[RMDB]
RNA sequence: GGGAACGACUCGAGUAGAGUCGAAAAGUAAUCUCAGCUACUUGGGAGGCUAAGGCAGAAUUGCUUGAACCCAGGAGGCAGAGGUUGCGGUGAGCCGAGAUCACGCCAUUGCACUCUAGCCUGGGCAAAGUGCCCGUAAAUUCGUUUACGGGCACUUAAAAGAAACAACAACAACAAC
Reactivity to 2A3 in 0.01 (KOAc 150mM, MgCl2 10mM, bicine 150mM(pH8.5), 24C), signal-to-noise 1, nucleotides 027 to 126: g030u040a040a110u000c010u010c090a010g000c000u050a060c000u090u070g000g050g020a030g000g010c040u030a020a060g020g000c000a000g020a300a300u170u130g000c000u000u060g010a050a040c000c000c000a000g070g030a070g080g000c020a010g000a000g070g050u270u180g000c030g010g050u000g010a060g040c060c040g020a150g010a160u200c020a010c130g010c000c000a000u000u060g000c040a010c050u000c000u040a030g020c000c000u000g040g000g000c010a060
Reactivity to DMS in 0.01 (KOAc 150mM, MgCl2 10mM, bicine 150mM(pH8.5), 24C), signal-to-noise 3, nucleotides 027 to 126: g010u000a050a040u010c040u000c030a070g010c030u000a070c020u000u010g010g010g030a190g010g010c070u010a070a080g010g020c100a060g010a090a060u010u000g010c030u000u010g010a090a120c010c000c000a040g020g000a230g000g000c040a030g000a020g010g010u000u000g010c010g000g010u000g000a130g030c020c060g000a150g010a070u010c180a100c170g020c030c010a030u010u000g000c010a100c030u020c030u000a110g000c020c010u000g010g000g010c120a070